Structure probing data (DMS) for a 177-nucleotide construct. For DMS the reverse transcriptase was MarathonRT. The reactions ran in a buffer of 150 mM KOAc, 10 mM MgCl2 and 150 mM bicine (pH 8.5), at 24 C.

RNA sequence: GGGAACGACUCGAGUAGAGUCGAAAAUCGUCUUGAACCAUGGGCGAAACCGCGGUGGCCCUCGGAGAAACGGAACACUUUACGGUUACUUUGGUGAGUUUGAUUGCACACUUGAGAAAGUGCAGUAAGUCAUGCAGGAGUUCGCUCCUGCAUGACUAAAAGAAACAACAACAACAAC
Reactivity to DMS in 0.01 (KOAc 150mM, MgCl2 10mM, bicine 150mM(pH8.5), 24C), signal-to-noise 1, nucleotides 027 to 126: u000c040g040u000c040u000u000g000a130a060c100c050a080u000g020g000g010c040g000a050a090a070c050c050g050c210g000g020u000g010g000c120c000c030u000c100g020g020a120g000a120a060a150c120g000g020a120a080c100a010c030u000u010u080a070c020g000g030u010u010a120c080u000u000u000g010g030u010g010a170g040u000u000u000g020a020u000u000g010c010a090c040a040c080u020u010g010a220g020a060a040a020g000u010g030c040a040g010u000a060